[RMDB]
RNA sequence: GGGAACGACUCGAGUAGAGUCGAAAACACCUGCCGAAUCAACUAGCCCCGAAAAUGGAUGGCGCUGAAGCGCGCGACCCACACCCGGCCAUCUGGGCGAACGCCAUGCCCCGAUGAGUAGGAGGGCCAGACUCUUAUACUUCGGUAUAAGAGUCUGAAAAGAAACAACAACAACAAC
Reactivity to 2A3 in 0.01 (KOAc 150mM, MgCl2 10mM, bicine 150mM(pH8.5), 24C), signal-to-noise 7, nucleotides 027 to 126: c040a040c010c010u030g010c020c020g060a040a080u070c020a050a070c030u080a040g030c000c010c000c010g130a090a070a030a030u100g040g030a040u060g060g000c010g000c040u110g080a180a070g050c040g000c000g000c010g090a090c000c010c000a040c010a030c040c010c000g040g000c010c010a010u000c010u010g000g000g020c000g030a090a020c070g070c070c020a070u160g010c000c000c000c000g020a040u040g020a010g050u050a030g010g090a040g010g010g000c000
Reactivity to DMS in 0.01 (KOAc 150mM, MgCl2 10mM, bicine 150mM(pH8.5), 24C), signal-to-noise 5, nucleotides 027 to 126: c080a140c030c020u000g000c010c020g010a080a090u030c070a080a090c070u030a130g010c000c010c020c040g030a070a080a100a080u030g010g010a060u010g010g010c000g000c030u010g000a150a130g010c130g020c050g000c040g000a090c040c020c010a070c120a070c070c020c010g000g000c000c000a010u000c010u010g000g020g020c030g020a060a100c120g020c130c080a090u020g000c000c000c000c050g000a080u010g000a110g010u010a060g000g000a150g000g000g000c080
An RNA of 177 nucleotides, treated with 2A3 and DMS and read out base by base.
The data come from the RNA Mapping Database (RMDB), libraries RFM100 and RFMREP.
The reactions ran in a buffer of 150 mM KOAc, 10 mM MgCl2 and 150 mM bicine (pH 8.5), at 24 C.